Source: RMDB library RFM100, as collected in RNAgym. An RNA of 177 nucleotides, treated with 2A3 and read out base by base. 2A3 adducts were read by reverse transcription with SuperScript II with manganese. The 2A3 profile rests on 562 reads. The RNA was probed in 150 mM KOAc, 10 mM MgCl2 and 150 mM bicine (pH 8.5) at 24 C.
RNA sequence: GGGAACGACUCGAGUAGAGUCGAAAAGAAAAUUUCCUUAUAAAUCUAGCCUCUACUAGGCUUUGUCUGUGCAUUCGAUAUACGGUCAGACAUAGCCUAUGAGAGGUUAGGUGUACCAAGGGGACAAAACACGGAGCAGUUUCGACUGCUCCGUGUUAAAAGAAACAACAACAACAAC
Reactivity to 2A3 in 0.01 (KOAc 150mM, MgCl2 10mM, bicine 150mM(pH8.5), 24C), signal-to-noise 1, nucleotides 027 to 126: g030a000a040a000a000u000u000u190c000c000u000u040a020u000a090a100a000u020c000u010a000g010c000c000u030c000u050a230c000u010a040g000g000c010u000u000u040g000u000c000u010g120u040g080c070a090u100u260c120g140a000u070a000u040a300c140g030g000u040c020a020g000a000c000a050u040a000g020c000c000u020a260u070g000a000g000a000g000g000u000u000a000g000g000u000g000u020a090c050c050a000a040g080g000g000g050a010c090a000a300